[RMDB]
RNA sequence: GGGAACGACUCGAGUAGAGUCGAAAAGAGCUUGGUUAAUUCUCUGGGCAUUUCUAAGGGCAAGUGGGAUUGAUAGUAUUUGCUCCAUUUUAUAAACAACCUGUUCAGUCGGCUGGCUGGGCAGCCAGUAGCUCAUUACAGCACGUUUGUGAUGUGGCUACGAGUAUGGUUUCGACCAUACUCGUAGAAAAGAAACAACAACAACAAC
Reactivity to DMS in 0.01 (KOAc 150mM, MgCl2 10mM, bicine 150mM(pH8.5), 24C), signal-to-noise 2, nucleotides 027 to 156: g000a080g000c080u010u000g030g000u000u000a060a070u000u000c030u000c050u010g010g000g000c050a110u000u000u010c060u020a150a160g020g000g000c000a030a080g020u000g000g010g010a170u000u000g020a110u000a110g020u000a090u000u000u000g030c030u010c020c040a120u000u000u000u000a100u010a060a060a110c010a080a200c190c010u010g010u000u000c040a030g030u000c000g020g010c090u000g030g020c000u000g000g020g020c070a040g040c010c030a100g030u000a080g000c020u000c010a070u000u000a040c000a020g000c040a060c150g000u010u000u000g070u010g010a060u000g010u000g010g000
Reactivity to 2A3 in 0.01 (KOAc 150mM, MgCl2 10mM, bicine 150mM(pH8.5), 24C), signal-to-noise 4, nucleotides 027 to 156: g060a000g020c050u090u080g020g070u120u100a120a060u280u020c040u000c060u060g020g010g000c030a030u110u150u080c090u160a090a090g030g000g010c020a090a050g050u130g010g060g020a100u080u130g040a040u140a060g060u090a090u080u090u090g030c030u060c030c030a060u080u120u080u050a140u110a070a070a030c050a030a030c010c010u010g000u020u020c010a020g040u070c030g120g110c110u130g010g010c000u020g000g090g000c020a000g020c010c000a030g020u050a020g020c010u010c040a040u060u190a020c020a020g040c050a010c130g030u030u090u050g010u010g020a070u040g020u040g040g020

Overview: Source: RMDB library OK3TST, as collected in RNAgym. An RNA of 207 nucleotides, treated with DMS and 2A3 and read out base by base. Conditions: 150 mM KOAc, 10 mM MgCl2 and 150 mM bicine (pH 8.5), 24 C. Reactivities are rounded to 0.1 and cut off at 0 and 3.